The record gives the reactivity of an RNA of 207 nucleotides to 2A3. The 2A3 profile rests on 889 reads. Source: RMDB library M2RFPK, as collected in RNAgym. The reactions ran in a buffer of 150 mM KOAc, 10 mM MgCl2 and 150 mM bicine (pH 8.5), at 24 C.
RNA sequence: GGGAACGACUCGAGUAGAGUCGAAAAUCCUAGAGAGCUUGGCCGUCGGGCCUUAUACCCGACUUGCUGAGUUUCUCUAGGAGAGUCCCUUUCCCAGCCCUGAGGCGCCUGGUCAAUAAAAGCCUCAAAAACUACCACUGGUUCGCCAGUGGUAGAAGAUAAGGUACUAGUUCGCUAGUACCUUAUCAAAAGAAACAACAACAACAAC
Reactivity to 2A3 in 0.01 (KOAc 150mM, MgCl2 10mM, bicine 150mM(pH8.5), 24C), signal-to-noise 1, nucleotides 027 to 156: u000c000c000u000a000g010a000g000a000g000c010u000u010g000g010c070c030g030u000c000g000g060g010c010c040u030u040a090u160a060c000c000c000g010a000c000u000u080g000c000u000g010a010g000u000u300u020c000u000c000u000a000g000g000a010g000a000g010u030c000c010c010u020u110u020c020c030c000a020g000c040c020c070u070g000a000g010g000c010g050c020c020u060g000g020u160c050a070a030u080a300a030a000a000g000c000c000u000c010a040a070a000a000a000c000u010a000c000c000a010c000u010g000g020u050u050c150g010c060c000a010g000u000g000g000u000a000g000a000a000